[RMDB]
RNA sequence: GGGAACGACUCGAGUAGAGUCGAAAAGGGGUCUUUCGCAGAGUGCGUGGUAGCUUUUGACGAGCUGAAGCCUCCACGGCUCGAUAAGCUACCCGCACGACGAAGCGAAAGACGGAGGCACCCAAAAGGAUUAGCAGUCUUCGGACUGCUAAUCCAACGAAGUGUAGACGUUCGCGUCUACACUUCGAAAAGAAACAACAACAACAAC
Reactivity to 2A3 in 0.01 (KOAc 150mM, MgCl2 10mM, bicine 150mM(pH8.5), 24C), signal-to-noise 1, nucleotides 027 to 156: g090g000g000g020u000c010u010u000u000c010g000c010a000g010a000g000u040g000c050g140u300g050g010u000a010g010c000u120u250u300u250g090a060c010g010a000g000c010u000g060a160a010g000c020c020u000c000c010a020c000g000g020c030u000c000g050a090u110a290a000g000c000u000a000c000c000c000g000c000a000c000g010a010c010g000a010a000g000c000g000a000a000a010g000a000c040g000g000a000g010g000c000a040c000c000c010a050a120a000a070g010g000a000u000u010a000g000c010a010g000u010c020u020u190c240g130g000a000c000u000g000c000u010a000a000u000c000c000a000a000

Structure probing data (2A3) for a 207-nucleotide construct. For 2A3 the reverse transcriptase was SuperScript II with manganese. The reactions ran in a buffer of 150 mM KOAc, 10 mM MgCl2 and 150 mM bicine (pH 8.5), at 24 C. Source: RMDB library RNAMAK, as collected in RNAgym.